[RMDB]
RNA sequence: GGGAACGACUCGAGUAGAGUCGAAAAGAGUUCCAACUGAGCAAGUGCCCACUGUGUUAAUUCAAGUUGCAAUAUACUGUAAGGACUCAAGCACUUCAAGCUAUAUGGACUCAAAUGGUACAUUUGAAUGGAAAGGAGGAUCCAUAAUGUCUGAUGCCACCGAUUGGGAUUUCGAUCCCAAUCGGUGAAAAGAAACAACAACAACAAC
Reactivity to 2A3 in 0.01 (KOAc 150mM, MgCl2 10mM, bicine 150mM(pH8.5), 24C), signal-to-noise 2, nucleotides 027 to 156: g030a040g010u180u000c010c000a010a010c110u130g040a030g000c010a000a020g020u000g000c000c010c030a110c040u050g070u030g000u130u100a060a080u130u060c090a140a150g000u010u020g020c020a030a000u070a000u040a140c010u000g010u040a060a040g150g000a010c000u000c040a010a010g000c000a000c000u080u080c080a100a000g000c000u010a010u010a070u220g010g000a000c000u000c000a040a050a030u160g010g000u130a020c020a040u070u100u110g070a100a070u070g000g020a030a080a120g030g010a040g020g000a030u040c000c000a020u120a170a010u040g040u040c040u040g040a030u130g010c000